[RMDB]
RNA sequence: GGGAACGACUCGAGUAGAGUCGAAAAACCCGUGAGAUUAAUUGCGGUUGAACUUGUUUUUCGUGCUAGACUGAUGAUUCGCCCUUAUACAUAUUGGCUAACUUUCGGCUAAUCUUCACCGAAUUUAGGUGCGUUAUAUUUUCGAAUAUAACGCACCAAAAGAAACAACAACAACAAC
Reactivity to DMS in 0.01 (KOAc 150mM, MgCl2 10mM, bicine 150mM(pH8.5), 24C), signal-to-noise 2, nucleotides 027 to 126: a030c010c000c000g060u020g010a120g010a100u010u000a040a100u010u000g020c120g010g040u000u030g000a080a130c200u000u010g000u000u000u000u000u000c040g020u030g030c050u000a030g010a080c070u010g000a080u030g000a130u000u020c040g000c020c020c040u000u010a050u010a070c130a130u020a050u030u000g010g000c020u020a060a140c090u000u050u010c040g010g000c010u000a020a050u000c090u020u030c070a160c010c000g000a040a090u010u000u030a020
Reactivity to 2A3 in 0.01 (KOAc 150mM, MgCl2 10mM, bicine 150mM(pH8.5), 24C), signal-to-noise 2, nucleotides 027 to 126: a000c020c000c020g010u110g040a110g000a110u210u110a190a110u180u140g040c090g000g000u010u140g040a060a000c040u070u080g040u000u180u050u030u070c020g010u040g040c040u010a010g020a110c030u050g040a020u020g020a030u070u070c010g010c000c010c000u010u050a090u060a200c000a040u230a130u050u060g020g020c030u050a110a030c030u110u080u070c030g000g000c000u030a040a100u100c040u090u130c010a060c000c070g030a040a110u030u010u070a140